[RMDB]
Source: RMDB library RFM100, as collected in RNAgym. This 177-nucleotide RNA was probed chemically with 2A3. Values are in units of 0.01, from 0 to 300, in steps of 10. The 2A3 profile rests on 406 reads. The reactions ran in a buffer of 150 mM KOAc, 10 mM MgCl2 and 150 mM bicine (pH 8.5), at 24 C. 2A3 adducts were read by reverse transcription with SuperScript II with manganese.
RNA sequence: GGGAACGACUCGAGUAGAGUCGAAAAGUCAUCACAAAUUUCUUCAAACUUAAAUAUCUUAAGGACCUUCAACGGACUUGAUAAUAGAGAUUAACGAACUUUGUGAUGACAACGAAGAUACAGAGGAGUUCAUCCACGCAUUCGUGCGUGGAUGAACAAAAGAAACAACAACAACAAC
Reactivity to 2A3 in 0.01 (KOAc 150mM, MgCl2 10mM, bicine 150mM(pH8.5), 24C), signal-to-noise 2, nucleotides 027 to 126: g000u000c000a010u000c000a000c000a000a010a000u010u000u020c030u000u040c050a030a300a300c000u020u020a040a120a000u070a110u000c040u170u150a000a190g290g250a300c000c000u300u130c040a080a060c090g000g000a000c000u010u030g020a000u020a010a070u140a000g050a000g010a030u080u050a000a110c050g000a000a000c000u000u000u000g000u000g000a000u000g030a000c000a000a000c000g000a000a040g010a000u060a100c090a030g040a080g020g060a100